[RMDB]
The record gives the reactivity of an RNA of 177 nucleotides to DMS and 2A3.
RNA sequence: GGGAACGACUCGAGUAGAGUCGAAAAGUAUGGGCGUUCGCGCCCAUACAAAACGUUCAUCCUACGGGACGGAAGUAGGAUUUAUGCUGAAGCAACGCAUCAAAACGGGCCGCUUCGGCGGCCCGAAGGAUGUACAUACGUUCGCGUAUGUACAUCCAAAAGAAACAACAACAACAAC
Reactivity to DMS in 0.01 (KOAc 150mM, MgCl2 10mM, bicine 150mM(pH8.5), 24C), signal-to-noise 1, nucleotides 027 to 126: g010u000a000u000g010g040g010c020g020u000u050c240g040c020g000c000c000c030a010u000a010c010a020a060a130a060c120g000u000u000c040a060u000c000c000u000a000c040g000g000g000a110c170g020g000a000a210g000u000a030g000g000a050u000u000u030a010u000g030c040u000g000a100a080g000c140a050a120c070g000c050a050u050c110a050a040a040a140c060g020g000g030c010c030g090c010u000u000c130g060g120c080g000g010c000c000c000g020a000a020
Reactivity to 2A3 in 0.01 (KOAc 150mM, MgCl2 10mM, bicine 150mM(pH8.5), 24C), signal-to-noise 1, nucleotides 027 to 126: g000u010a000u000g000g000g000c030g010u100u100c220g000c010g000c090c010c000a000u000a000c010a000a000a000a000c030g050u070u050c040a030u030c000c010u020a010c030g030g080g110a020c080g090g050a090a060g010u020a020g000g000a010u000u110u000a060u040g020c040u080g040a090a030g080c030a060a010c050g000c040a050u050c040a090a060a020a070c000g020g000g010c000c010g030c110u070u050c150g040g000c000g020g030c000c000c020g010a000a000
Notes:
In probing experiments dimethyl sulfate is read out at A N1 and C N3, which are open when not base-paired. The data come from the RNA Mapping Database (RMDB), library M2PK50. For DMS the reverse transcriptase was MarathonRT. 2A3 adducts were read by reverse transcription with SuperScript II with manganese. For 2A3, 1,506 sequencing reads were counted.